RNA sequence: GGGAACGACUCGAGUAGAGUCGAAAAAGUGGCAGUCCGUACGCGGCCUGCCACAUGCAAGAGAAGAAGCGUUCAACCAAGCCGUGACAGGCAAGUCAGGGCUUCGGCGGGAAAUUGCUCUUACCAAAAAACCUCCUUUCCUUCGGGAAAGGAGGAACCUGUACCGUAAGUUCGCUUACGGUACAGGAAAAGAAACAACAACAACAAC
Reactivity to 2A3 in 0.01 (KOAc 150mM, MgCl2 10mM, bicine 150mM(pH8.5), 24C), signal-to-noise 1, nucleotides 027 to 156: a000g000u010g000g010c020a000g000u000c000c010g000u040a030c170g000c040g130g000c000c000u000g050c000c000a000c010a000u000g000c000a030a080g050a030g040a050a000g040a090a020g030c000g010u020u000c010a050a060c010c000a000a000g030c060c050g280u010g010a000c010a160g100g200c020a020a020g000u000c010a000g090g020g000c000u000u080c090g010g000c030g030g100g040a060a030a090u110u120g000c000u000c000u000u030a110c030c040a000a020a000a020a020a180c000c000u010c010c000u010u010u010c000c000u000u080c250g120g030g000a000a000a000g000g000a000g000g000a000a000
This 207-nucleotide RNA was probed chemically with 2A3. 2A3 adducts were read by reverse transcription with SuperScript II with manganese. The data come from the RNA Mapping Database (RMDB), library M2RFPK. Conditions: 150 mM KOAc, 10 mM MgCl2 and 150 mM bicine (pH 8.5), 24 C.